[RMDB]
RNA sequence: GGGAACGACUCGAGUAGAGUCGAAAAGAUAUGGAUCUAAUACAGCAACAGCUUGUGGUUCGGAAACGAACCCAAGACAUGCUGUUAGAUCCUAAGUCAAACUUUGAUCCGUUCGCGGAUCAAAGAAGCCCUAGUCCUACUUCGGUAGGACUAGGGCAAAAGAAACAACAACAACAAC
Reactivity to 2A3 in 0.01 (KOAc 150mM, MgCl2 10mM, bicine 150mM(pH8.5), 24C), signal-to-noise 1, nucleotides 027 to 126: g030a020u020a000u030g010g000a000u000c000u020a090a110u300a300c040a060g060c100a190a210c110a300g050c020u010u120g080u300g110g040u000u020c010g050g000a000a010a010c010g000a000a000c000c000c010a000a000g030a010c040a170u300g020c000u000g000u020u000a000g000a000u000c020c010u000a000a000g010u010c000a150a040a090c000u000u000u020g010a000u030c010c020g010u070u060c300g000c010g160g020a000u000c000a000a010a000g030a060a010